Conditions: 150 mM KOAc, 10 mM MgCl2 and 150 mM bicine (pH 8.5), 24 C. The record gives the reactivity of an RNA of 177 nucleotides to DMS. For DMS the reverse transcriptase was MarathonRT. The DMS profile rests on 1,142 reads. Source: RMDB library TTRINS, as collected in RNAgym.
RNA sequence: GGGAACGACUCGAGUAGAGUCGAAAAGAUAUGGAGCGCCUACUCGUAGAGCGAAGAACGCUACUACCCACCGACUCGGAAACGAGUCGAGGUAGCGGGAGCUUCAAGAGUAGGCGCUCCUAAGUCACUUGACCUAAAAGUUCGCUUUUAGGUCAAGAAAAGAAACAACAACAACAAC
Reactivity to DMS in 0.01 (KOAc 150mM, MgCl2 10mM, bicine 150mM(pH8.5), 24C), signal-to-noise 2, nucleotides 027 to 126: g000a030u000a300u020g000g010a030g050c000g080c000c010u000a010c010u000c010g020u020a300g000a010g050c000g020a070a110g000a180a230c000g000c000u000a010c000u010a090c060c030c040a300c220c000g000a000c020u000c010g030g000a110a070a280c020g010a020g000u000c000g000a010g040g010u000a020g000c040g000g000g030a090g020c010u000u040c090a300a300g000a010g000u000a000g020g040c000g000c010u000c020c000u010a010a040g010u000c020a150